Structure probing data (DMS and 2A3) for a 207-nucleotide construct. Reactivities are given for positions 27 through 156.
RNA sequence: GGGAACGACUCGAGUAGAGUCGAAAACCAAUGGGAAACCAUUGGCAACUCGGAAACGAGUUGAACCGGGAAUUACGUCGUAAACCGGCGACAAUGCGAUUUUAAGCAUUGUCGAUUACGCCCAUGUCGAUUUUAAGACAUGGAGCGAAACGACGAAGCAUCGAGGUGCGUUCGCGCACUUUGAUGCAAAAGAAACAACAACAACAAC
Reactivity to DMS in 0.01 (KOAc 150mM, MgCl2 10mM, bicine 150mM(pH8.5), 24C), signal-to-noise 5, nucleotides 027 to 156: c010c000a010a010u010g020g000g000a270a140a230c000c000a020u000u000g010g010c010a020a030c000u000c010g020g010a190a130a190c020g010a040g010u000u010g010a090a130c010c000g020g020g000a220a130u000u000a070c010g020u000c010g020u000a090a150a240c030c020g010g020c000g020a010c010a010a010u000g020c000g010a290u010u000u000u000a110a300g000c000a010u010u000g030u000c000g000a110u000u000a050c020g030c020c010c000a020u000g000u010c020g000a240u000u000u010u010a100a270g000a030c000a000u000g010g000a070g030c000g020a020a060a040c020g000a020c010g010a180a300
Reactivity to 2A3 in 0.01 (KOAc 150mM, MgCl2 10mM, bicine 150mM(pH8.5), 24C), signal-to-noise 9, nucleotides 027 to 156: c000c000a000a000u010g000g000g010a040a020a030c000c000a000u000u000g000g000c000a000a000c000u000c000g010g030a080a050a040c010g000a000g000u000u000g010a040a030c000c000g000g000g030a050a070u190u120a090c010g000u000c000g000u010a020a050a050c000c000g000g000c000g000a000c000a000a000u000g010c030g130a170u030u080u070u300a100a010g000c000a000u000u000g000u000c000g000a000u000u030a040c010g000c000c000c000a000u000g000u000c020g040a100u050u060u080u300a100a010g000a000c000a000u000g000g010a060g000c000g000a010a050a010c000g000a000c000g010a020a010
Description
The data come from the RNA Mapping Database (RMDB), library OK3TST.